[RMDB]
RNA sequence: GGGAACGACUCGAGUAGAGUCGAAAAGAUAUGGAAUCCACCUUUUGACGGCUAACAUUCGGAAACGAAUGAAUGGCCGAUAAGGGGAUUCCUAAGUCAAAGAGCGAAAAGUUCGCUUUUCGCUCAACAUAUCGUUAUUGUUCGCAAUAACGAUAUGAAAAGAAACAACAACAACAAC
Reactivity to DMS in 0.01 (KOAc 150mM, MgCl2 10mM, bicine 150mM(pH8.5), 24C), signal-to-noise 9, nucleotides 027 to 126: g010a030u000a300u010g010g000a020a000u000c000c000a170c010c000u000u000u000u010g020a180c120g010g010c000u000a080a250c010a000u000u000c000g010g000a090a070a140c000g000a010a010u000g000a090a110u000g000g010c000c000g010a030u000a010a010g010g010g000g000a010u000u000c000c000u000a000a070g000u000c040a080a120a130g010a010g010c000g000a010a010a000a010g010u000u010c220g010c000u000u000u000u000c000g010c000u000c000a040a110
Reactivity to 2A3 in 0.01 (KOAc 150mM, MgCl2 10mM, bicine 150mM(pH8.5), 24C), signal-to-noise 9, nucleotides 027 to 126: g000a020u040a030u110g000g020a000a010u050c020c030a300c300c150u090u090u080u160g300a180c130g000g000c010u020a080a020c020a020u000u010c010g040g010a060a050a030c010g010a010a010u010g030a110a130u120g020g000c000c020g010a020u020a000a000g000g000g000g010a000u000u000c000c000u000a010a000g010u000c050a160a090a110g000a000g010c000g020a010a010a000a000g040u100u160c270g110c100u000u000u000u000c000g000c000u000c000a000a000